[RMDB]
RNA sequence: GGGAACGACUCGAGUAGAGUCGAAAAAUGCCCAGGUCGGACCGCGAGGAGGUGGAGAUGCCAUGCCGACCCGAAGAGGAAAGAAGAACUCGGACGCGAACCGUGAGUGGAACCCUGAUCCUUUAUUAAUAUAUUGACGGUUCGCCGUCAAUAUAUUAAAAGAAACAACAACAACAAC
Reactivity to DMS in 0.01 (KOAc 150mM, MgCl2 10mM, bicine 150mM(pH8.5), 24C), signal-to-noise 2, nucleotides 027 to 126: a070u010g030c000c000c000a210g000g000u000c040g000g000a150c070c100g010c070g030a100g020g010a130g000g030u000g000g000a120g000a110u010g010c050c040a100u030g000c000c010g010a070c030c030c070g000a070a080g000a070g000g010a090a090a060g020a100a100g000a070a080c080u000c040g010g010a110c070g010c060g000a030a040c050c030g010u000g010a080g000u000g010g000a060a090c070c030c040u000g000a110u000c060c030u010u020u010a120u020u010